[RMDB]
RNA sequence: GGGAACGACUCGAGUAGAGUCGAAAAAAUGCUAGCAUUAAUCGGGUAAAACGGGUAAAGCCGAUCGUAUGAUUUAAUGCCGUAAGUCAUAAAGAGUCGCUAAGUAAUUAGUGGCUAGUCAAUUAACAAUUGGCAAGGAAAUCGAUAUGCGGGAAAACAUACGUAAGAACUUCGGUUCUUACGUAUGAAAAGAAACAACAACAACAAC
Reactivity to DMS in 0.01 (KOAc 150mM, MgCl2 10mM, bicine 150mM(pH8.5), 24C), signal-to-noise 3, nucleotides 027 to 156: a100a020u000g020c020u010a040g000c020a030u000u000a030a040u000c000g010g020g000u000a040a030a060a110c050g010g000g010u010a190a110a250g010c010c000g010a110u010c040g020u010a090u010g000a080u000u010u000a020a040u000g020c000c030g000u010a040a050g060u000c010a050u000a040a070a120g010a030g040u000c020g040c010u000a030a040g010u010a100a120u000u010a010g030u000g010g010c010u000a070g010u000c040a050a030u010u000a100a110c150a100a150u000u000g030g010c020a090a120g020g010a050a050a060u010c050g000a160u000a050u000g000c030g010g040g010a100a040a060a190
Reactivity to 2A3 in 0.01 (KOAc 150mM, MgCl2 10mM, bicine 150mM(pH8.5), 24C), signal-to-noise 5, nucleotides 027 to 156: a000a000u130g010c030u040a040g010c010a010u030u050a050a020u030c010g030g000g120u150a080a110a030a050c040g010g010g030u050a060a050a030g080c000c000g040a030u030c030g050u110a030u160g030a030u050u060u140a030a010u040g010c000c010g030u030a050a040g030u040c010a010u040a100a110a030g090a020g020u000c000g000c000u000a010a010g020u030a110a090u020u000a000g000u010g000g000c000u040a000g000u000c010a000a030u040u070a100a070c050a060a050u030u020g030g010c010a020a020g070g040a060a090a050u080c040g020a010u040a040u200g040c030g020g020g020a020a110a010a020